Annotation
The record gives the reactivity of an RNA of 177 nucleotides to DMS. The DMS profile rests on 674 reads. The data come from the RNA Mapping Database (RMDB), library OK2TRN. Conditions: 150 mM KOAc, 10 mM MgCl2 and 150 mM bicine (pH 8.5), 24 C.

RNA sequence: GGGAACGACUCGAGUAGAGUCGAAAAGUGUACAAAACUCGAUAUUCUAUGUAUGUGAGGUGAUUAUGCCAGAUAAACCACUAAGUAUUGGGAUGAUCACAACCGAAACAGGAUGGAUGACAGUCAAAGACUGCACAACGUUCGCGUUGUGCAGUCUAAAAGAAACAACAACAACAAC
Reactivity to DMS in 0.01 (KOAc 150mM, MgCl2 10mM, bicine 150mM(pH8.5), 24C), signal-to-noise 1, nucleotides 027 to 126: g010u000g000u030a130c090a050a090a120a050c050u000c030g060a230u010a060u000u000c040u020a040u000g010u000a080u000g020u000g000a250g000g070u000g000a040u020u000a090u000g000c000c000a060g000a140u000a060a060a080c070c070a190c190u000a030a100g010u000a130u020u000g000g020g020a030u000g010a060u000c050a050c050a150a010c070c040g000a100a110a020c030a030g010g000a040u000g000g000a050u050g000a060c230a020g010u000c050a120a100